An RNA of 177 nucleotides, treated with 2A3 and DMS and read out base by base. 2A3 adducts were read by reverse transcription with SuperScript II with manganese. Values cover nucleotides 27 to 126. For DMS the reverse transcriptase was MarathonRT. For DMS, 7,063 sequencing reads were counted. The reactions ran in a buffer of 150 mM KOAc, 10 mM MgCl2 and 150 mM bicine (pH 8.5), at 24 C.

RNA sequence: GGGAACGACUCGAGUAGAGUCGAAAAGAUAUGGAAUUAUGUCCUGUGGACGAAUUCGGAAACGAACUAUCCACUGGACUUCAGUAAUUCCUAAGUCAAAACCUGAUGCGGUUCGCCGCAUCAGGAACAAUUAGCCAAUGUUCGCAUUGGCUAAUUGAAAAGAAACAACAACAACAAC
Reactivity to 2A3 in 0.01 (KOAc 150mM, MgCl2 10mM, bicine 150mM(pH8.5), 24C), signal-to-noise 5, nucleotides 027 to 126: g010a010u090a040u190g000g010a010a030u030u010a050u300g000u000c000c000u020g010u020g000g010a040c120g160a150a300u010u010c010g020g040a050a080a040c010g000a010a010c020u020a060u010c000c010a010c020u000g000g000a000c000u060u080c040a020g040u030a010a000u010u020c010c000u020a190a040g060u030c040a010a020a100a150c010c000u000g000a000u000g000c000g020g040u040u130c290g010c140c000g000c010a000u010c000a000g000g000a000a010
Reactivity to DMS in 0.01 (KOAc 150mM, MgCl2 10mM, bicine 150mM(pH8.5), 24C), signal-to-noise 6, nucleotides 027 to 126: g000a050u000a300u010g000g000a030a010u000u000a030u000g010u000c000c000u010g010u000g010g010a020c110g000a050a110u000u010c000g020g000a130a130a200c000g000a000a010c070u010a250u000c010c000a010c010u000g020g000a010c030u010u000c160a150g000u000a020a010u000u000c000c010u000a080a180g000u010c030a110a070a100a130c010c000u000g000a010u000g010c000g000g020u000u010c250g010c000c000g010c000a000u000c000a000g010g000a030a070
Background
The data come from the RNA Mapping Database (RMDB), library TTRDEL.